[RMDB]
RNA sequence: GGGAACGACUCGAGUAGAGUCGAAAAAAGGUCUGGGUGAAAUGAACCCAGAGCAACUGUGGGAAACCACUAUGGAUCCAACCAGCCGCCGUAUGUUGCGGGUGAUGGUGAAAGAUGCGAUUGCGGCGCGUAUCAGCAUAUUCGUAUGCUGAUACGCAAAAGAAACAACAACAACAAC
Reactivity to 2A3 in 0.01 (KOAc 150mM, MgCl2 10mM, bicine 150mM(pH8.5), 24C), signal-to-noise 3, nucleotides 027 to 126: a010a010g080g070u020c010u010g000g040g040u000g090a150a170a220u130g010a070a080c000c000c000a010g000a010g000c000a030a040c070u100g010u010g040g010g020a050a050a050c000c000a010c030u010a070u050g030g010a010u000c010c000a000a080c020c000a030g110c010c010g030c000c000g100u160a160u300g150u130u130g060c000g030g010g030u050g050a030u050g000g020u030g020a060a020a000g010a020u140g070c040g120a150u070u160g060c060g060g080c070
Reactivity to DMS in 0.01 (KOAc 150mM, MgCl2 10mM, bicine 150mM(pH8.5), 24C), signal-to-noise 3, nucleotides 027 to 126: a120a090g020g010u000c010u000g000g010g030u000g010a160a150a180u030g030a120a060c000c010c000a010g020a060g000c040a060a080c100u010g020u010g000g000g000a120a120a210c010c000a010c000u000a200u000g000g010a180u000c020c030a060a090c130c010a050g000c010c010g010c000c020g020u010a060u010g020u010u010g010c010g010g000g010u010g020a100u000g010g000u000g000a230a080a030g010a130u000g010c080g010a120u000u000g000c020g010g020c110